[RMDB]
RNA sequence: GGGAACGACUCGAGUAGAGUCGAAAAGAUAUGGAGACUGGAGCCUUGGAUUUAUAUAACUAUCGGAAACGAUAGCUAAUAUUGUCAGGCUCCUGUCUCCUAAGUCAAAUCUGGCUUCGGCCAGAAACAUCGUAGUUUAGUUCGCUAAACUACGAUGAAAAGAAACAACAACAACAAC
Reactivity to DMS in 0.01 (KOAc 150mM, MgCl2 10mM, bicine 150mM(pH8.5), 24C), signal-to-noise 3, nucleotides 027 to 126: g010a030u000a300u000g010g010a010g000a030c000u000g010g010a010g020c000c000u000u000g010g020a030u000u010u010a000u000a020u000a040a100c000u000a010u000c000g000g000a110a140a230c010g000a000u000a000g010c010u000a060a070u000a010u000u000g010u000c030a030g000g020c010u000c000c000u000g000u000c000u010c000c000u000a000a050g010u000c020a080a100a100u000c000u000g010g010c000u020u010c200g030g010c000c010a000g000a040a080a220
Reactivity to 2A3 in 0.01 (KOAc 150mM, MgCl2 10mM, bicine 150mM(pH8.5), 24C), signal-to-noise 2, nucleotides 027 to 126: g010a000u060a020u130g000g010a000g010a010c040u060g010g000a010g010c020c040u100u190g160g010a080u200u300u030a020u000a000u010a030a040c010u000a000u000c000g040g000a090a020a020c000g000a020u010a000g000c010u050a070a030u030a040u020u080g050u050c060a030g010g000c010u000c000c000u000g000u000c000u010c000c000u010a000a000g000u000c000a010a020a140u010c000u000g000g000c010u080u050c300g170g010c000c000a000g000a010a010a010